Structure probing data (DMS and 2A3) for a 207-nucleotide construct. It was measured as part of the RMDB library M2RFPK. 2A3 adducts were read by reverse transcription with SuperScript II with manganese. For 2A3, 4,110 sequencing reads were counted. Conditions: 150 mM KOAc, 10 mM MgCl2 and 150 mM bicine (pH 8.5), 24 C.
[RMDB]
RNA sequence: GGGAACGACUCGAGUAGAGUCGAAAAAAAGACGCGGUUGCCGAUCGGUAUGGAUGCCACCGUGACGGCUCAAUCACACAAGGGCCAACGAUAACGAGGCGCUCGCUAUUGCUGCGUAACUGACGGCUAGAUACAGCCAGGUUCGCCUGGCUGUAAACGUAACAUGUGUAUUCGUACACAUGUUACGAAAAGAAACAACAACAACAAC
Reactivity to DMS in 0.01 (KOAc 150mM, MgCl2 10mM, bicine 150mM(pH8.5), 24C), signal-to-noise 2, nucleotides 027 to 156: a080a020a070g000a090c050g020c020g020g010u000u000g020c020c060g010a120u000c030g020g030u000a110u010g020g020a170u010g000c010c030a090c030c030g020u000g000a190c080g010g020c030u010c060a130a080u020c090a140c080a130c120a150a120g000g010g020c010c010a050a130c070g020a080u010a060a100c000g000a080g030g010c070g010c040u010c030g010c040u000a030u020u000g000c010u000g000c010g010u000a090a090c070u000g020a140c060g000g000c040u010a060g000a300u010a010c010a020g010c000c000a020g000g010u000u000c300g020c000c010u000g050g000c010u010g010u000a010a040a150
Reactivity to 2A3 in 0.01 (KOAc 150mM, MgCl2 10mM, bicine 150mM(pH8.5), 24C), signal-to-noise 5, nucleotides 027 to 156: a000a000a010g110a010c060g010c020g030g010u040u040g000c010c030g080a160u030c020g030g020u110a080u170g100g050a070u120g000c000c020a050c050c010g010u030g040a070c060g010g010c010u000c020a050a090u150c040a020c030a040c030a180a130g000g000g030c010c000a040a010c050g050a050u090a140a030c080g010a050g040g010c020g010c040u060c070g000c060u070a130u160u300g020c040u040g000c010g030u050a080a060c030u040g060a060c020g020g020c020u030a040g010a110u060a050c000a010g010c000c000a000g020g010u020u020c090g040c050c000u000g000g020c000u000g000u000a010a010a000